An RNA of 207 nucleotides, treated with 2A3 and DMS and read out base by base.
It was measured as part of the RMDB library OK3TST.
The reactions ran in a buffer of 150 mM KOAc, 10 mM MgCl2 and 150 mM bicine (pH 8.5), at 24 C.
For 2A3 the reverse transcriptase was SuperScript II with manganese.
[RMDB]
RNA sequence: GGGAACGACUCGAGUAGAGUCGAAAAUAUGCGCAGGAGCACAGGGACUCGCCCGUGCUCCGUCCGCCCACGCGGCGCCAGCGCCACGACCGGCAGCGGGGGCUGGUGUGGGAUGACGAGGACUCCGCGGACGAUAGCAGCGUGCUGGACCUGGGGGCAAUAACAGUGGCUUCGGCCACUGUUAUUGAAAAGAAACAACAACAACAAC
Reactivity to 2A3 in 0.01 (KOAc 150mM, MgCl2 10mM, bicine 150mM(pH8.5), 24C), signal-to-noise 2, nucleotides 027 to 156: u290a080u070g050c060g000c050a040g000g020a020g000c030a010c120a260g020g010g050a160c070u040c110g240c030c000c000g000u000g040c000u080c000c000g000u010c000c010g000c000c010c010a040c040g030c030g000g050c030g090c030c000a030g000c030g010c010c000a100c080g280a180c150c050g040g020c030a130g000c030g010g010g000g020g080c030u120g050g060u030g010u030g000g000g050a090u140g010a030c020g020a070g000g080a050c050u010c010c040g030c030g030g020a010c020g030a040u060a070g060c050a040g030c060g090u070g020c000u060g030g020a060c020c030u050g010g000g000g000g000
Reactivity to DMS in 0.01 (KOAc 150mM, MgCl2 10mM, bicine 150mM(pH8.5), 24C), signal-to-noise 1, nucleotides 027 to 156: u000a060u010g030c040g000c090a130g040g030a040g000c000a010c000a080g030g020g010a290c120u010c120g040c010c020c020g060u030g000c000u000c000c000g000u000c030c040g000c000c000c000a060c080g020c020g020g000c000g000c000c020a090g000c010g000c010c010a050c060g020a120c180c140g000g000c050a130g050c080g010g020g000g010g010c020u020g020g030u000g030u010g000g000g020a040u000g020a090c080g010a150g000g030a100c050u000c010c010g010c020g020g000a060c040g000a180u000a120g040c000a200g010c070g050u000g010c080u000g000g000a120c010c000u000g000g000g010g050g060